RNA sequence: GGGAACGACUCGAGUAGAGUCGAAAACGGGGUACGAGGGAUUGUAAAGGCUCUCUGGGGAAACAGUCCCGUACCCAUAGACUACUUUUGAAAUAAACCCAGAGAGCCUUAUGUCAGAAGUGGUCAAGGUACUCGGAGAUUUCGAUCUUUGAGUACCAAAAGAAACAACAACAACAAC
Reactivity to DMS in 0.01 (KOAc 150mM, MgCl2 10mM, bicine 150mM(pH8.5), 24C), signal-to-noise 6, nucleotides 027 to 126: c090g000g000g000g010u000a000c000g010a120g010g010g010a030u010u000g010u020a090a100a100g000g000c000u000c000u000c000u000g000g000g010g030a120a120a130c020a020g020u000c000c010c010g000u010a000c010c000c000a040u020a030g000a030c010u000a010c020u000u010u020u000g010a040a100a120u030a080a090a150c010c000c000a000g000a010g000a000g010c000c000u010u010a020u030g020u000c010a020g000a010a010g020u000g000g010u000c010a160a160
Reactivity to 2A3 in 0.01 (KOAc 150mM, MgCl2 10mM, bicine 150mM(pH8.5), 24C), signal-to-noise 9, nucleotides 027 to 126: c030g000g000g000g000u020a010c020g030a240g060g070g010a020u010u020g050u140a160a180a160g010g000c000u000c000u010c010u010g000g000g010g120a060a150a000c000a000g000u010c000c000c000g000u000a000c000c000c000a010u060a010g000a000c000u000a000c000u010u020u010u020g050a030a060a040u290a130a220a070c000c000c000a010g010a000g000a000g010c000c000u010u080a060u060g070u000c000a000g000a010a000g010u000g000g000u010c030a040a050

The record gives the reactivity of an RNA of 177 nucleotides to DMS and 2A3. The DMS profile rests on 34,334 reads. Conditions: 150 mM KOAc, 10 mM MgCl2 and 150 mM bicine (pH 8.5), 24 C. For DMS the reverse transcriptase was MarathonRT. For 2A3 the reverse transcriptase was SuperScript II with manganese.